[RMDB]
RNA sequence: GGGAACGACUCGAGUAGAGUCGAAAAGGUGGAGGAGAGACCACUUCCAGAGGACCCCCUCAGCGAACAGAGGAGCAUCCUCCCCUGGAGAGAGAAGACCAUAGCGAUGGGGGGGAUGCUAGGAGUGCAUAAUGGAGUGGUUCGCCACUCCAUUAUGAAAAGAAACAACAACAACAAC
Reactivity to 2A3 in 0.01 (KOAc 150mM, MgCl2 10mM, bicine 150mM(pH8.5), 24C), signal-to-noise 2, nucleotides 027 to 126: g090g000u020g050g010a080g050g040a060g010a020g020a090c000c010a040c010u110u020c030c020a080g030a140g090g100a170c020c010c000c020c000u020c010a050g050c020g050a060a030c020a070g020a050g020g060a000g040c000a000u000c020c010u020c030c020c000c010u020g080g000a110g000a010g010a000g040a240a030g070a070c050c040a150u150a090g110c080g040a070u110g000g010g000g010g000g000g000a000u000g010c030u000a000g000g030a040g030u110g030
Reactivity to DMS in 0.01 (KOAc 150mM, MgCl2 10mM, bicine 150mM(pH8.5), 24C), signal-to-noise 4, nucleotides 027 to 126: g010g000u010g000g000a080g000g010a120g000a140g010a080c060c030a070c020u010u000c030c030a110g000a120g010g000a170c030c020c040c000c000u000c030a070g000c060g000a030a050c060a090g010a110g010g000a060g000c020a030u000c000c000u000c010c000c000c010u000g000g000a120g000a110g010a110g010a100a110g010a090c080c040a100u010a080g000c090g000a090u000g000g000g020g010g000g000g030a010u010g000c010u010a030g000g000a120g000u000g010